The record gives the reactivity of an RNA of 177 nucleotides to DMS and 2A3.
The 2A3 profile rests on 7,905 reads.
High DMS reactivity at an A or C suggests that its Watson-Crick edge is free.
2A3 adducts were read by reverse transcription with SuperScript II with manganese.
The RNA was probed in 150 mM KOAc, 10 mM MgCl2 and 150 mM bicine (pH 8.5) at 24 C.
Reactivities are given for positions 27 through 126.

RNA sequence: GGGAACGACUCGAGUAGAGUCGAAAAGAUAUGGACCAAGCAACAGCGUGUGGCGGUCGGAAACGACCGAAUCACGACAUGCUUGAGUCCUAAGUCAAAGCUUAAGAUUCUUCGGAAUCUUAAGCAAGUACACCAGAAGGUUCGCCUUCUGGUGUACAAAAGAAACAACAACAACAAC
Reactivity to DMS in 0.01 (KOAc 150mM, MgCl2 10mM, bicine 150mM(pH8.5), 24C), signal-to-noise 4, nucleotides 027 to 126: g010a060u000a300u030g000g000a010c010c010a020a010g010c000a030a090c270a230g010c030g020u000g000u000g000g040c060g010g020u000c000g020g000a050a090a150c010g020a010c010c000g010a040a040u000c000a020c000g010a050c110a160u010g010c000u000u000g000a070g010u000c000c000u000a000a080g000u000c040a070a110a160g000c000u000u000a000a000g000a010u010u000c000u000u020c200g030g000a010a000u000c000u010u000a000a000g020c000a010a040
Reactivity to 2A3 in 0.01 (KOAc 150mM, MgCl2 10mM, bicine 150mM(pH8.5), 24C), signal-to-noise 4, nucleotides 027 to 126: g030a020u080a030u130g000g000a000c010c000a020a000g010c000a010a210c050a160g160c050g090u070g050u070g140g060c030g010g000u000c010g000g010a050a050a000c010g000a000c000c010g030a020a020u110c000a000c010g220a120c030a050u040g000c000u020u020g120a060g020u000c000c000u020a040a020g040u030c050a100a090a040g000c000u000u000a000a000g000a010u010u000c020u030u160c300g080g000a010a010u010c000u000u010a000a000g020c000a000a010